[RMDB]
Structure probing data (2A3 and DMS) for a 177-nucleotide construct. Values cover nucleotides 27 to 126. Reactivities are rounded to 0.1 and cut off at 0 and 3. The data come from the RNA Mapping Database (RMDB), library M2PK50. For DMS, 3,688 sequencing reads were counted. The RNA was probed in 150 mM KOAc, 10 mM MgCl2 and 150 mM bicine (pH 8.5) at 24 C.

RNA sequence: GGGAACGACUCGAGUAGAGUCGAAAAUCCUGCUAGUUCGCUAGCAGGAAAAACAAAACUGUACACGCAGUACAGAAAAACAAAAACAAAACAUAAUGCGUAAAAGCACAGGCUUCGGCCUGUGCAACAACUUACGAUAGUUCGCUAUCGUAAGUUGAAAAGAAACAACAACAACAAC
Reactivity to 2A3 in 0.01 (KOAc 150mM, MgCl2 10mM, bicine 150mM(pH8.5), 24C), signal-to-noise 6, nucleotides 027 to 126: u020c000c000u000g000c000u000a000g010u050u050c240g020c110u000a000g000c000a000g000g010a080a030a000a010a010c030a000a070a010a050c010u000g000u010a000c010a000c040g010c020a010g010u010a010c010a000g110a090a070a010a000a010c060a030a080a020a010a010c060a020a110a030a000c040a070u260a220a060u200g010c010g120u120a050a060a030a050g000c000a000c000a010g000g020c010u060u150c200g080g000c010c000u000g000u000g000c000a000a000
Reactivity to DMS in 0.01 (KOAc 150mM, MgCl2 10mM, bicine 150mM(pH8.5), 24C), signal-to-noise 3, nucleotides 027 to 126: u000c000c000u000g010c000u000a000g010u000u010c240g040c000u000a000g010c010a000g000g000a000a020a060a080a090c070a050a090a100a140c010u000g000u000a020c000a090c030g000c010a100g000u000a010c000a000g010a010a030a060a140a100c120a040a050a060a070a090c130a070a060a070a090c180a070u010a090a130u000g000c020g000u000a070a040a090a120g020c010a010c010a020g000g000c000u000u010c180g030g010c000c000u010g010u000g000c000a030a040